Record summary
An RNA of 177 nucleotides, treated with DMS and 2A3 and read out base by base. DMS adducts were read by reverse transcription with MarathonRT. Reactivities are rounded to 0.1 and cut off at 0 and 3. Source: RMDB library OK1LIB, as collected in RNAgym. The reactions ran in a buffer of 150 mM KOAc, 10 mM MgCl2 and 150 mM bicine (pH 8.5), at 24 C.

[RMDB]
RNA sequence: GGGAACGACUCGAGUAGAGUCGAAAAGACUAAUGGUAAGCCUGUAUAUGACUUAGUGAGCCGUUCAGUGAUGAGAACUGACAAUCGUUACCACUCGGCAAGUUAGGUAUACUUAGACAUUAGAGAAGAUAUUGUGGAAUUUCGAUUUUACGAUAUCAAAAGAAACAACAACAACAAC
Reactivity to DMS in 0.01 (KOAc 150mM, MgCl2 10mM, bicine 150mM(pH8.5), 24C), signal-to-noise 9, nucleotides 027 to 126: g010a180c020u000a010a020u010g000g000u010a020a070g000c160c060u010g010u020a060u020a060u010g010a050c020u000u000a050g010u020g000a300g000c030c020g010u020u020c210a070g020u000g010a070u000g010a080g010a090a090c130u020g010a100c230a080a080u010c040g010u010u010a020c030c030a270c140u010c040g000g000c020a040a150g000u010u000a020g000g030u000a020u010a070c030u000u000a030g000a090c020a020u000u010a030g000a180g000a090a090
Reactivity to 2A3 in 0.01 (KOAc 150mM, MgCl2 10mM, bicine 150mM(pH8.5), 24C), signal-to-noise 9, nucleotides 027 to 126: g050a020c010u010a010a000u020g020g010u030a030a010g040c010c030u030g130u020a060u010a010u110g120a040c000u010u010a010g040u060g100a010g010c010c000g010u050u070c060a010g000u000g030a070u070g030a030g030a080a050c060u070g070a030c080a040a120u080c030g010u010u030a030c010c010a010c020u020c000g000g000c000a000a010g010u010u010a020g010g000u010a010u010a010c010u010u020a010g030a040c000a010u000u010a000g000a010g020a110a010